[RMDB]
RNA sequence: GGGAACGACUCGAGUAGAGUCGAAAAUCCCGUAUGAACGCCAACCUCACCUUGAACAAGGUGGCGCGGGCGGCGCAGGGGGAUGAAGCAGCCCUUCGCGUGCUCCAGCAGUACGGGAAGGACGUGGACCUGGAUCUCUAUUCGUAGAGAUCCAGGUAAAAGAAACAACAACAACAAC
Reactivity to DMS in 0.01 (KOAc 150mM, MgCl2 10mM, bicine 150mM(pH8.5), 24C), signal-to-noise 4, nucleotides 027 to 126: u000c000c000c000g010u000a070u020g000a090a100c000g010c010c010a110a170c040c020u010c010a020c000c010u000u000g000a170a080c250a040a010g000g020u000g010g000c300g010c300g010g000g050c130g010g010c090g020c040a080g010g010g000g000g020a110u010g000a120a110g020c080a130g010c050c000c000u000u000c000g000c010g000u000g000c000u000c020c220a130g030c160a030g010u000a000c020g000g000g010a030a010g010g010a040c020g010u010g010g010
Reactivity to 2A3 in 0.01 (KOAc 150mM, MgCl2 10mM, bicine 150mM(pH8.5), 24C), signal-to-noise 2, nucleotides 027 to 126: u000c020c000c040g000u220a240u140g100a140a040c000g000c010c010a030a040c000c010u040c020a010c000c000u040u080g170a190a090c120a050a110g000g000u000g000g000c040g000c000g000g000g000c030g000g000c060g000c030a010g010g070g010g010g010a020u080g090a090a030g060c070a020g030c030c030c000u010u010c150g110c000g040u000g000c000u020c040c040a080g120c090a010g000u010a000c030g000g140g010a000a000g010g000a000c040g040u080g090g040